Conditions: 150 mM KOAc, 10 mM MgCl2 and 150 mM bicine (pH 8.5), 24 C. Chemical mapping of a 177-nucleotide RNA with DMS.
RNA sequence: GGGAACGACUCGAGUAGAGUCGAAAAGAUAUGGAUAGGGUCCACUUUUGACGACUAGUGUACACAGGCUUACUUCGGAAACGAAGUAAGCCUGUGUACAGGUCGAUAAGUGGCCCUAUCCUAAGUCCUCUGAUAACUAGUUCGCUAGUUAUCAGAGAAAAGAAACAACAACAACAAC
Reactivity to DMS in 0.01 (KOAc 150mM, MgCl2 10mM, bicine 150mM(pH8.5), 24C), signal-to-noise 1, nucleotides 027 to 126: g020a120u020a250u000g010g000a010u000a000g000g000g000u030c000c010a010c010u010u000u020u000g000a230c120g010a030c010u000a140g040u010g030u000a000c000a020c020a040g020g000c020u000u000a030c000u010u010c040g010g000a190a090a250c040g000a070a000g020u000a010a020g000c010c000u010g000u000g000u000a010c000a040g010g010u000c000g010a100u000a010a000g040u010g000g010c010c000c000u000a000u010c000c000u010a040a100g010u010c040
Reactivities are rounded to 0.1 and cut off at 0 and 3. DMS adducts were read by reverse transcription with MarathonRT.